This 177-nucleotide RNA was probed chemically with 2A3 and DMS. Source: RMDB library OK1LIB, as collected in RNAgym. For DMS, 1,083 sequencing reads were counted. The RNA was probed in 150 mM KOAc, 10 mM MgCl2 and 150 mM bicine (pH 8.5) at 24 C.
RNA sequence: GGGAACGACUCGAGUAGAGUCGAAAAACGCUGGCCUCCUUGCGCUGGGCAGCCCAUACGCGGCGUACAUCGAAUUUAAUGACUCUUGGCUAAAAUAGUUUGCCAACAGUUGCUCCGCGCUGGCACAUGCAUUUACCUCGUUCGCGAGGUAAAUGCAAAAAGAAACAACAACAACAAC
Reactivity to 2A3 in 0.01 (KOAc 150mM, MgCl2 10mM, bicine 150mM(pH8.5), 24C), signal-to-noise 3, nucleotides 027 to 126: a040c060g000c020u030g080g000c010c030u040c020c000u010u080g000c040g010c000u030g000g020g010c010a000g030c020c000c000a230u300a130c150g020c170g000g010c000g020u060a010c010a080u080c060g180a130a120u130u220u090a230a090u180g060a010c020u000c010u040u000g050g000c090u120a000a090a050a060u300a150g300u080u070u120g030c020c000a030a000c030a010g040u020u000g020c000u030c040c000g000c020g010c000u000g000g040c010a000c000a060
Reactivity to DMS in 0.01 (KOAc 150mM, MgCl2 10mM, bicine 150mM(pH8.5), 24C), signal-to-noise 1, nucleotides 027 to 126: a180c090g000c010u000g000g010c010c040u000c100c010u000u000g020c050g000c010u000g000g000g000c100a150g040c050c000c000a210u000a090c030g020c030g040g010c000g000u020a070c130a170u050c060g000a010a140u020u010u040a070a130u080g040a010c000u000c120u000u000g000g010c000u000a020a050a090a270u090a040g000u000u000u000g010c000c000a020a110c200a030g000u030u000g000c050u000c000c080g010c000g020c060u000g000g000c090a050c190a090

Notes: For 2A3 the reverse transcriptase was SuperScript II with manganese. For DMS the reverse transcriptase was MarathonRT.